The record gives the reactivity of an RNA of 207 nucleotides to 2A3. Reactivities are given for positions 27 through 156. Conditions: 150 mM KOAc, 10 mM MgCl2 and 150 mM bicine (pH 8.5), 24 C.
RNA sequence: GGGAACGACUCGAGUAGAGUCGAAAAUUCUCUUUCGAGAGAACCAACGGGGUCGCUAAGACAGACAUUUCGCAACAGCAUACUGAAGCCUCCACGGUAUGACAUGCGACCAUCAAUGACGGCGACGGAGGCACCCAUCACCUGGAUUCGUCCAGAAGCUUACGAAAGUGUUCGCACUUUCGUAAGCAAAAGAAACAACAACAACAAC
Reactivity to 2A3 in 0.01 (KOAc 150mM, MgCl2 10mM, bicine 150mM(pH8.5), 24C), signal-to-noise 2, nucleotides 027 to 156: u030u020c000u010c000u000u040u070c240g030a030g040a000g010a040a030c020c000a030a070c110g080g000g020g020u020c020g000c080u050a160a020g080a150c140a050g120a040c140a160u230u300u140c080g000c050a060a100c020a160g030c000a020u000a010c010u000g030a110a010g000c000c000u080c010c000a030c000g000g010u000a000u000g050a060c040a040u100g000c010g050a100c040c080a110u210c080a070a170u140g050a080c050g070g040c030g000a000c080g010g010a000g000g000c000a040c010c000c000a090u140c020a050c080c000u000g010g000a070u100u080c190g040u040c030c010a010g030a020a010
It was measured as part of the RMDB library RNAMAK.
2A3 adducts were read by reverse transcription with SuperScript II with manganese.